[RMDB]
RNA sequence: GGGAACGACUCGAGUAGAGUCGAAAAACCUUAUUUUGAGAAGCUGAGGGAUUUGGCCCAUUGAAGCUUCAGCAACCGACUUUAAAUAGCACGGUGCUAAUACCAACGAGCAACUCGAAUGAUAAGUAAAACGUUGACAAGUUCGCUUGUCAACGAACAUCUUAAGUCAGUUCGCUGACUUAAGAUGAAAAGAAACAACAACAACAAC
Reactivity to DMS in 0.01 (KOAc 150mM, MgCl2 10mM, bicine 150mM(pH8.5), 24C), signal-to-noise 3, nucleotides 027 to 156: a100c040c000u000u000a080u000u000u020u000g010a150g020a050a280g010c060u000g010a080g010g000g010a130u000u000u000g000g010c010c000c000a300u000u010g010a130a060g000c000u000u000c030a040g030c020a040a050c000c000g010a110c000u010u000u000a100a070a100u000a020g040c000a030c020g010g020u000g020c000u000a050a060u000a070c040c040a070a100c110g010a130g010c030a090a260c040u000c030g020a070a080u000g000a150u000a030a080g020u000a040a070a080a120c020g030u000u000g000a030c000a020a040g020u000u000c300g050c000u000u000g000u000c000a000a000c000g000a030a070
Reactivity to 2A3 in 0.01 (KOAc 150mM, MgCl2 10mM, bicine 150mM(pH8.5), 24C), signal-to-noise 6, nucleotides 027 to 156: a000c050c000u120u080a250u070u120u120u100g090a050g000a010a000g000c000u010g000a010g030g000g020a050u020u010u030g000g000c000c000c010a010u040u040g000a000a000g000c000u000u000c000a000g000c000a010a030c000c000g030a020c010u080u070u200a150a200a250u130a130g000c010a000c040g020g000u000g000c000u000a020a010u030a070c010c000a010a040c040g040a030g070c090a090a160c090u020c080g090a120a070u110g090a090u090a180a030g030u090a050a090a060a040c000g000u010u000g000a000c000a010a000g010u020u080c150g070c150u000u000g010u000c000a000a000c000g000a010a000